[RMDB]
The record gives the reactivity of an RNA of 177 nucleotides to DMS and 2A3. 2A3 adducts were read by reverse transcription with SuperScript II with manganese. The RNA was probed in 150 mM KOAc, 10 mM MgCl2 and 150 mM bicine (pH 8.5) at 24 C. The data come from the RNA Mapping Database (RMDB), library OK2TST.
RNA sequence: GGGAACGACUCGAGUAGAGUCGAAAAUCGCCUUUGAGGGGCACUAAAUUCCUUGAAGGCUUUGAAUGUUAGAGGAAUAUUGAUCCCCUUAAAUACUGUAUCAUUGAGCAAUGGUUCACCUUGCCCCCUUAAAGAUCAGUUUCGACUGAUCUUUAAGAAAAGAAACAACAACAACAAC
Reactivity to DMS in 0.01 (KOAc 150mM, MgCl2 10mM, bicine 150mM(pH8.5), 24C), signal-to-noise 9, nucleotides 027 to 126: u000c120g010c010c020u000u000u010g010a010g000g010g010g020c220a070c130u010a050a090a110u000u000c000c000u000u000g000a070a120g010g010c030u000u010u000g000a110a090u010g000u000u000a180g010a030g000g000a060a050u000a110u000u000g010a120u010c010c010c010c030u000u000a040a040a070u010a080c130u000g010u000a050u000c060a070u000u010g000a100g010c050a050a050u010g010g000u000u010c130a070c040c040u000u000g000c020c000c010c100
Reactivity to 2A3 in 0.01 (KOAc 150mM, MgCl2 10mM, bicine 150mM(pH8.5), 24C), signal-to-noise 4, nucleotides 027 to 126: u020c010g040c000c000u000u020u030g030a010g000g000g020g040c030a010c030u030a030a100a080u040u020c010c000u000u000g060a090a040g020g000c000u050u060u080g050a040a010u100g020u090u080a060g010a010g070g040a050a070u060a100u060u140g080a150u130c000c010c000c000u020u040a040a040a000u120a080c050u080g060u110a070u100c020a070u050u130g070a040g040c040a020a070u090g010g040u110u090c020a100c050c010u020u070g020c000c010c020c020